About this RNA: The record gives the reactivity of an RNA of 177 nucleotides to DMS and 2A3. The reactions ran in a buffer of 150 mM KOAc, 10 mM MgCl2 and 150 mM bicine (pH 8.5), at 24 C. For DMS, 952 sequencing reads were counted. 2A3 adducts were read by reverse transcription with SuperScript II with manganese.
RNA sequence: GGGAACGACUCGAGUAGAGUCGAAAAAGCACAAUUACCGCCAGGGCUAUGCCACGCAAACCGUGGGCCCAUGGCACUUAGGCAAAUUAGAGAUAGACUUUGGAGAAUGCCCCGGAACAACAGUCACUCUGUAAUCAUCCUUCGGGAUGAUUACAGAAAAAGAAACAACAACAACAAC
Reactivity to DMS in 0.01 (KOAc 150mM, MgCl2 10mM, bicine 150mM(pH8.5), 24C), signal-to-noise 2, nucleotides 027 to 126: a070g010c040a040c110a050a030u000u000a120c110c090g020c040c020a070g030g000g010c040u000a100u020g020c040c000a000c000g000c200a180a140a140c300c030g040u010g000g040g020c000c170c000a040u010g000g030c000a040c050u010u000a130g000g010c070a030a030a120u000u000a040g020a090g000a050u020a090g030a020c030u000u000u000g000g000a220g000a070a060u000g010c050c010c000c060g020g000a030a010c070a020a020c100a110g010u000c190a170c110
Reactivity to 2A3 in 0.01 (KOAc 150mM, MgCl2 10mM, bicine 150mM(pH8.5), 24C), signal-to-noise 2, nucleotides 027 to 126: a020g030c040a000c030a040a060u180u100a070c020c120g020c000c010a020g010g040g000c020u130a090u280g050c010c000a010c050g040c120a080a160a160c060c000g000u020g000g010g010c030c020c010a040u020g000g020c000a030c060u010u120a010g000g000c030a000a030a200u130u050a090g030a000g030a140u010a100g030a080c000u020u030u140g150g000a120g040a160a030u130g070c010c000c000c000g020g000a010a030c020a000a000c000a040g110u070c010a040c060

For DMS the reverse transcriptase was MarathonRT. The 2A3 profile rests on 1,074 reads.